[RMDB]
RNA sequence: GGGAACGACUCGAGUAGAGUCGAAAACGUGGCCGCUCCGUGCCGUGGGAUGGGACCCUUGUGGGCAGCCUGGGCGUCUGGGCAGGGCUGUGCUGUGGCGGGGCGCUGGCUGCAGCCCGGCACGUGCGCAUUAGGUUCACUUCGGUGAACCUAAUGCAAAAGAAACAACAACAACAAC
Reactivity to 2A3 in 0.01 (KOAc 150mM, MgCl2 10mM, bicine 150mM(pH8.5), 24C), signal-to-noise 2, nucleotides 027 to 126: c010g030u060g090g000c000c020g040c060u060c060c030g070u050g010c010c000g030u180g010g000g040a110u100g020g080g170a110c010c020c000u040u150g150u240g030g020g010c020a000g010c020c010u080g060g090g040c020g050u050c040u110g040g010g020c020a040g000g080g000c110u120g080u120g030c020u050g010u110g090g080c110g020g000g030g030c060g000c040u050g050g000c010u050g000c020a060g000c000c010c040g010g000c000a010c020g030u040g020c060
Reactivity to DMS in 0.01 (KOAc 150mM, MgCl2 10mM, bicine 150mM(pH8.5), 24C), signal-to-noise 2, nucleotides 027 to 126: c090g010u010g010g040c030c020g020c080u010c100c020g020u000g020c020c010g010u000g020g020g020a190u000g000g020g020a240c040c010c020u030u000g020u010g010g010g060c040a040g010c010c000u010g000g000g020c010g010u010c010u010g010g000g000c020a120g000g020g010c080u010g030u000g020c020u000g000u030g030g020c010g010g020g000g000c030g010c030u000g010g000c030u010g000c030a140g000c020c050c000g000g000c000a040c020g020u010g000c150
Structure probing data (2A3 and DMS) for a 177-nucleotide construct. The 2A3 profile rests on 2,923 reads. For DMS the reverse transcriptase was MarathonRT. The DMS profile rests on 3,657 reads. Values cover nucleotides 27 to 126.